Structure probing data (2A3 and DMS) for a 207-nucleotide construct. The 2A3 profile rests on 1,219 reads. The reactions ran in a buffer of 150 mM KOAc, 10 mM MgCl2 and 150 mM bicine (pH 8.5), at 24 C.
[RMDB]
RNA sequence: GGGAACGACUCGAGUAGAGUCGAAAAGGCGUUUGUCAAACAGUCGGCGACUGACGAGUACGUUGAAUCCGCAGAAGACCUCCUGGAGUCAGUCGAUGUCAAGGGGCUGCUGUUCGUCGACGAGUUAGCCCGCGAAACACCAGCUAGCCGCGACGAACACUUCAAAUGCGUUCGCGCAUUUGAAGUGAAAAGAAACAACAACAACAAC
Reactivity to 2A3 in 0.01 (KOAc 150mM, MgCl2 10mM, bicine 150mM(pH8.5), 24C), signal-to-noise 2, nucleotides 027 to 156: g050g020c050g040u020u090u150g170u050c070a030a120a080c050a060g110u060c000g070g020c030g020a040c010u020g010a020c000g000a060g070u120a110c070g050u020u050g050a110a070u000c040c040g000c020a010g000a230a030g090a160c000c050u090c000c030u070g020g000a050g000u010c000a000g030u060c030g060a050u110g100u160c060a060a070g020g020g030g000c020u020g010c010u020g000u020u000c000g010u000c010g030a300c040g000a060g050u000u010a000g000c000c120c040g020c010g060a050a100a030c090a060c060c030a010g000c000u000a000g010c000c000g020c030g000a000c000g010a010a000
Reactivity to DMS in 0.01 (KOAc 150mM, MgCl2 10mM, bicine 150mM(pH8.5), 24C), signal-to-noise 2, nucleotides 027 to 156: g000g010c020g020u000u000u010g020u000c080a070a110a140c080a180g020u000c020g010g010c030g000a080c050u000g000a040c010g000a180g030u010a040c060g000u000u000g000a080a140u000c000c060g030c110a180g010a080a110g000a090c030c020u020c020c020u010g000g010a180g010u000c010a060g020u010c070g020a090u010g020u000c030a020a110g000g010g010g000c020u000g030c030u000g000u000u000c000g030u000c020g020a110c010g010a080g010u000u000a010g010c030c050c050g030c040g000a120a100a140c070a050c010c020a140g020c010u010a020g010c010c010g010c020g000a050c010g000a030a120
It was measured as part of the RMDB library OK3TST.